[RMDB]
An RNA of 177 nucleotides, treated with 2A3 and DMS and read out base by base. The reactions ran in a buffer of 150 mM KOAc, 10 mM MgCl2 and 150 mM bicine (pH 8.5), at 24 C. The 2A3 profile rests on 1,549 reads. The DMS profile rests on 3,453 reads.
RNA sequence: GGGAACGACUCGAGUAGAGUCGAAAAACUCGGGCGGGUGAACAUCACCGGUUGAGCUGGAUUUCGGGGCCCUCAACUCCCCUACUCUCAGCGCAAACAAACACAUCUGAAAAGGCAUCGGCCCCCGUUGCUAAAGUCUGUUCGCAGACUUUAGCAAAAAAGAAACAACAACAACAAC
Reactivity to 2A3 in 0.01 (KOAc 150mM, MgCl2 10mM, bicine 150mM(pH8.5), 24C), signal-to-noise 2, nucleotides 027 to 126: a000c040u050c040g020g020g000c060g000g050g010u030g020a020a020c060a160u090c000a010c020c030g040g010u020u040g020a020g010c040u010g020g030a050u030u030u030c050g000g040g000g000c010c060c000u070c040a030a050c020u050c020c000c010c000u000a030c000u010c010u000c040a020g000c030g020c080a030a060a030c020a030a090a000c030a040c010a160u040c010u100g060a140a050a000a000g030g000c010a060u030c020g080g000c000c000c000c020c000g060
Reactivity to DMS in 0.01 (KOAc 150mM, MgCl2 10mM, bicine 150mM(pH8.5), 24C), signal-to-noise 3, nucleotides 027 to 126: a020c040u000c050g030g000g030c000g000g000g000u000g000a060a080c130a080u000c010a090c070c050g000g000u000u000g000a120g020c030u000g010g010a060u020u020u030c140g010g010g000g000c190c040c060u000c190a100a140c180u030c030c000c000c010u010a030c080u000c010u010c020a060g000c050g010c090a080a060a050c090a080a060a120c130a080c100a060u000c100u020g010a050a100a090a090g000g010c000a070u010c010g000g000c000c020c000c050c030g030